[RMDB]
RNA sequence: GGGAACGACUCGAGUAGAGUCGAAAAUAAAACAGUUAUAGUCUACUUGACAUUUAUAAGGAUAACUACGGAAAAGCUGUAGCUAAUACUUGCAUUAUCCUUUUGGAUAAGUAUUUGUUAGAAGGAAUUAUAACAAAGAAGUAACACGUAAAGUGUGGUAUUCGUUAGGCUUCGGCCUAACGAAUACAAAAGAAACAACAACAACAAC
Reactivity to 2A3 in 0.01 (KOAc 150mM, MgCl2 10mM, bicine 150mM(pH8.5), 24C), signal-to-noise 2, nucleotides 027 to 156: u260a010a060a000a020c010a010g000u010u010a030u000a020g020u030c040u060a040c050u090u060g000a010c000a030u050u040u010a190u100a030a010g000g010a020u010a040a030c020u010a000c030g060g000a090a170a050a110g120c030u010g010u020a010g000c000u000a000a000u060a200c030u040u040g000c010a100u010u010a010u010c000c000u070u140u110u300g000g000a010u010a050a010g020u020a070u020u000u000g000u020u010a030g010a100a040g040g010a000a030u040u000a010u000a050a000c030a060a080a090g010a050a000g070u090a050a020c000a000c010g070u090a160a070a130g010u020g000u050g000

Structure probing data (2A3) for a 207-nucleotide construct. The RNA was probed in 150 mM KOAc, 10 mM MgCl2 and 150 mM bicine (pH 8.5) at 24 C. The 2A3 profile rests on 861 reads.